[RMDB]
The data come from the RNA Mapping Database (RMDB), library RNAMAK. Chemical mapping of a 207-nucleotide RNA with DMS and 2A3. The DMS profile rests on 2,267 reads. DMS adducts were read by reverse transcription with MarathonRT. Reactivities are rounded to 0.1 and cut off at 0 and 3. The RNA was probed in 150 mM KOAc, 10 mM MgCl2 and 150 mM bicine (pH 8.5) at 24 C. 2A3 adducts were read by reverse transcription with SuperScript II with manganese.
RNA sequence: GGGAACGACUCGAGUAGAGUCGAAAACUACCCUAUUCGUAGGGUAGAAAAAACCUUUGUGUUAGCGCAGAUACUGGAGAGUAGAUGUCCCAUUGGGACGCUACUCUAUGAAGGAGUAGCUAACACUCUGGUAAAAAUCACGCCUUCGGGCGUGAAACUCAAGUUUUUAGUUCGCUAAAAACUUGAGAAAAGAAACAACAACAACAAC
Reactivity to DMS in 0.01 (KOAc 150mM, MgCl2 10mM, bicine 150mM(pH8.5), 24C), signal-to-noise 1, nucleotides 027 to 156: c000u000a020c000c000c000u000a070u000u000c230g040u020a030g020g000g020u000a070g000a020a000a070a040a150a050c000c010u010u000u040g000u000g030u000u000a020g020c020g010c200a190g020a170u000a090c010u000g000g020a070g010a030g060u000a010g010a100u010g000u000c010c000c000a300u000u000g030g020g000a040c010g000c000u000a010c020u000c020u010a000u010g000a230a230g010g020a050g000u000a210g010c010u000a020a030c010a010c010u000c030u010g020g030u000a000a100a050a160a170u000c000a000c000g020c010c000u000u010c300g100g030g000c000g000u000g000a000a020a040
Reactivity to 2A3 in 0.01 (KOAc 150mM, MgCl2 10mM, bicine 150mM(pH8.5), 24C), signal-to-noise 2, nucleotides 027 to 156: c000u010a000c000c020c000u000a000u090u090c260g040u090a000g000g000g000u020a000g010a050a060a010a000a000a010c020c000u010u020u000g010u000g010u000u000a010g010c060g020c200a010g040a130u060a120c000u030g000g020a000g010a010g030u000a020g040a300u080g000u000c040c000c030a160u190u300g000g000g000a000c000g000c000u000a000c010u020c020u010a110u020g020a000a020g020g020a010g000u040a060g040c010u000a000a000c000a000c000u000c000u000g000g000u030a030a040a000a010a040u040c000a000c010g010c020c000u030u050c230g080g010g000c000g000u010g000a010a000a000